[RMDB]
RNA sequence: GGGAACGACUCGAGUAGAGUCGAAAAUAGAGUCGGAGCAUUUCGUCGUCAACUUUUACGGUGAUGCCUUUUGCACAUCGUUUGUAGACGCCGGACAUCUGGAAUUGGAUGGAAUUUCGGAGAUUUGAGCCUGAUCCCUGUUCGCAGGGAUCAGGCUAAAAGAAACAACAACAACAAC
Reactivity to 2A3 in 0.01 (KOAc 150mM, MgCl2 10mM, bicine 150mM(pH8.5), 24C), signal-to-noise 2, nucleotides 027 to 126: u210a030g000a030g040u120c080g010g000a030g000c050a080u020u020u020c000g060u010c000g010u000c080a040a000c020u130u190u210u140a030c040g030g000u030g070a300u000g000c100c110u270u300u230u300g000c040a000c000a000u000c000g030u070u020u010g020u010a010g010a020c010g070c000c020g030g000a020c110a010u030c030u020g000g130a130a010u010u070g100g100a090u070g000g050a080a210u060u000u000c000g070g000a150g020a170u080u100u100g010